[RMDB]
RNA sequence: GGGAACGACUCGAGUAGAGUCGAAAAGGUCGAGGAUCUGCUCGCCGACCGGGCCGCCCUGGACGCGGCCACGGAUCCGAUGCCGGUCCCGGAGGAGUGGGGGCGGCUCGCCGACGACGCAAAGUUCGCCGACGAGUUGGCCGCCGCGAUCAAGGCCCGUCAUCACUAAAUUCGUUUAGUGAUGACGAAAAGAAACAACAACAACAAC
Reactivity to 2A3 in 0.01 (KOAc 150mM, MgCl2 10mM, bicine 150mM(pH8.5), 24C), signal-to-noise 1, nucleotides 027 to 156: g050g000u090c030g060a130g030g000a020u030c000u010g010c000u010c000g030c040c010g010a010c000c000g000g000g000c010c000g020c020c000c140u190g080g060a120c080g000c000g000g000c000c010a000c000g010g010a190u000c010c000g040a110u290g030c010c060g010g000u020c000c010c000g010g000a040g050g010a020g000u070g000g010g020g000g000c020g020g000c020u030c000g000c000c000g020a020c000g000a030c000g090c150a300a090a000g060u160u000c010g000c000c000g000a030c020g000a000g030u000u060g170g020c050c020g060c020c000g000c000g010a050u060c060a050a040g060g010c020c030